[RMDB]
Structure probing data (2A3 and DMS) for a 177-nucleotide construct.
RNA sequence: GGGAACGACUCGAGUAGAGUCGAAAAGUCAGCGAGUAGGAUCUUCCCUUUUACUCGCUUGUCAUUAACCUGAGAACGUGGCAGUGGGGGAGGAGAGGCUUGGCCCGGGGUGCACAGGACUGUGGGCCUCGGGACAGGCAUUCGUGCCUGUCCCGAGAAAAGAAACAACAACAACAAC
Reactivity to 2A3 in 0.01 (KOAc 150mM, MgCl2 10mM, bicine 150mM(pH8.5), 24C), signal-to-noise 1, nucleotides 027 to 126: g050u040c010a000g020c000g010a010g010u020a010g000g030a050u030c090u050u090c010c000c020u000u030u020u010a000c000u010c000g000c000u070u180g000u020c040a070u010u120a100a100c020c000u010g060a060g010a110a020c080g010u030g020g020c010a030g020u110g020g020g020g000g010a040g030g000a040g010a010g000g090c010u080u070g050g040c000c040c020g020g000g010g000u080g040c030a020c020a080g120g150a070c110u050g010u040g110g110g000c000
Reactivity to DMS in 0.01 (KOAc 150mM, MgCl2 10mM, bicine 150mM(pH8.5), 24C), signal-to-noise 3, nucleotides 027 to 126: g010u000c020a020g010c010g010a020g000u000a020g010g000a040u000c130u000u010c030c020c010u000u000u000u000a000c000u010c000g020c020u000u010g020u010c020a060u000u010a130a170c030c040u000g010a130g020a080a080c090g030u010g000g010c050a030g010u000g030g000g020g000g000a070g010g020a110g000a100g000g000c040u000u000g010g040c030c010c030g010g000g010g020u000g010c030a030c050a050g010g010a080c150u000g030u000g030g000g030c080
Annotation
For DMS the reverse transcriptase was MarathonRT. 2A3 adducts were read by reverse transcription with SuperScript II with manganese. For 2A3, 1,943 sequencing reads were counted. For DMS, 4,757 sequencing reads were counted. Conditions: 150 mM KOAc, 10 mM MgCl2 and 150 mM bicine (pH 8.5), 24 C.